[RMDB]
RNA sequence: GGGAACGACUCGAGUAGAGUCGAAAACACCCCUGAUAUCAGCGGCCACAUGCACAGUGAGUGAGUGCAUCUACUCAGCAGAUUACGGCGGUAUGGCCUCCAUACAAUAUACGUCAGAUCGAGAGGGCACACUUUCUCUUUUCGAAGAGAAAGUGUGAAAAGAAACAACAACAACAAC
Reactivity to 2A3 in 0.01 (KOAc 150mM, MgCl2 10mM, bicine 150mM(pH8.5), 24C), signal-to-noise 4, nucleotides 027 to 126: c070a040c000c010c020c020u050g080a050u060a040u200c050a020g050c020g040g010c020c010a060c020a050u050g050c000a010c010a060g100u060g180a090g060u100g040a030g030u050g030c000a040u000c010u040a050c010u010c040a050g010c010a010g070a060u070u100a090c080g000g030c040g010g010u050a050u050g010g020c020c010u000c010c000a010u040a080c020a040a130u130a030u050a280c060g010u030c030a030g020a080u040c010g030a030g030a030g110g020g010
Reactivity to DMS in 0.01 (KOAc 150mM, MgCl2 10mM, bicine 150mM(pH8.5), 24C), signal-to-noise 5, nucleotides 027 to 126: c170a230c050c000c010c090u010g000a120u000a060u000c080a050g020c050g010g000c050c050a080c110a060u010g020c020a070c030a080g020u000g000a130g010u020g010a070g030u000g000c050a050u010c080u010a060c030u010c020a090g020c080a090g000a090u000u000a080c100g000g000c040g010g000u000a020u000g010g020c070c040u010c030c030a030u020a040c080a100a060u010a140u010a220c070g010u000c020a070g000a060u000c030g000a100g000a050g010g000g020

Structure probing data (2A3 and DMS) for a 177-nucleotide construct. For DMS, 4,445 sequencing reads were counted.